Chemical mapping of a 207-nucleotide RNA with 2A3 and DMS. For DMS, 4,999 sequencing reads were counted. 2A3 adducts were read by reverse transcription with SuperScript II with manganese. The data come from the RNA Mapping Database (RMDB), library M2RFPK. For DMS the reverse transcriptase was MarathonRT. Reactivities are rounded to 0.1 and cut off at 0 and 3.
[RMDB]
RNA sequence: GGGAACGACUCGAGUAGAGUCGAAAAUUGCGCUUGCCUAUUUAGGCAUACUUCUCAGGAUGGCGCGUUGCAGUCCAACAAGAUCCAGGGACUGUACAGAAUUUUCCUAGACCUCGAGUCGGGUUUGAAAACGUUAGGCACUUCGGUGCCUAACGAAUCCACAUUGAUAGUUCGCUAUCAAUGUGGAAAAAGAAACAACAACAACAAC
Reactivity to 2A3 in 0.01 (KOAc 150mM, MgCl2 10mM, bicine 150mM(pH8.5), 24C), signal-to-noise 5, nucleotides 027 to 156: u060u090g010c000g010c020u030u050g030c010c000u140a270u240u260u300a020g000g020c010a010u060a050c040u140u120c090u020c130a040g120g010a090u150g030g000c010g000c020g010u020u050g000c000a020g000u000c020c000a050a060c070a240a160g120a210u110c080c060a030g040g000g020a000c000u000g010u010a020c030a030g190a080a050u030u020u050u000c000c010u040a050g010a040c010c000u000c010g000a000g000u020c010g000g000g000u070u040u130g070a070a070a000a000c000g000u000u000a000g000g000c000a000c000u010u050c190g060g000u000g010c000c000u000a000a000c000g000a000a000
Reactivity to DMS in 0.01 (KOAc 150mM, MgCl2 10mM, bicine 150mM(pH8.5), 24C), signal-to-noise 3, nucleotides 027 to 156: u000u000g030c030g040c000u000u000g020c000c000u000a230u010u000u020a070g040g030c030a060u010a060c030u010u000c080u000c090a160g030g030a100u000g030g010c020g020c030g000u010u000g010c010a030g010u000c030c010a120a190c040a100a130g010a110u010c030c040a230g000g000g020a010c040u000g020u010a160c110a160g040a050a050u000u000u000u010c000c010u000a120g000a070c170c010u000c000g000a110g030u000c030g000g000g030u000u000u010g000a120a060a070a140c020g010u000u000a010g000g020c000a020c010u000u000c300g050g030u000g000c000c000u010a000a000c000g020a030a050